[RMDB]
RNA sequence: GGGAACGACUCGAGUAGAGUCGAAAAUGGGUCCAGAAAACUAACAUGCACUCCCGGACUGGUAGGGAAGUUUCCACCUACCUACAAUCCUUAGUUACAGCCCUUGGUAGCUACAAAGCUAUUCAAACCGUCGUAUGAUAUUCGUAUCAUACGACGGAAAAGAAACAACAACAACAAC
Reactivity to 2A3 in 0.01 (KOAc 150mM, MgCl2 10mM, bicine 150mM(pH8.5), 24C), signal-to-noise 2, nucleotides 027 to 126: u080g000g010g020u060c060c020a060g120a020a130a000a010c070u040a040a020c010a070u140g000c040a050c080u000c000c000c010g000g030a030c030u020g030g020u000a000g000g010g080a180a090g030u000u040u000c020c020a010c010c010u010a020c000c000u030a010c060a020a060u050c000c000u060u060a010g010u030u040a110c050a050g020c010c030c000u050u040g040g000u010a000g000c010u050a110c150a110a250a030g000c000u000a030u080u110c040a070a040a040
Reactivity to DMS in 0.01 (KOAc 150mM, MgCl2 10mM, bicine 150mM(pH8.5), 24C), signal-to-noise 3, nucleotides 027 to 126: u000g010g010g010u010c040c100a150g000a080a070a130a060c050u020a040a040c270a060u000g020c160a090c060u000c010c050c020g040g000a040c150u000g000g000u000a010g020g000g000a030a130g020u000u000u000c020c030a170c000c000u000a050c000c000u000a030c150a090a090u000c020c010u000u000a080g000u000u010a180c070a150g000c010c010c020u000u010g010g000u000a020g000c010u000a100c300a040a070a020g010c020u000a020u000u010c050a090a110a240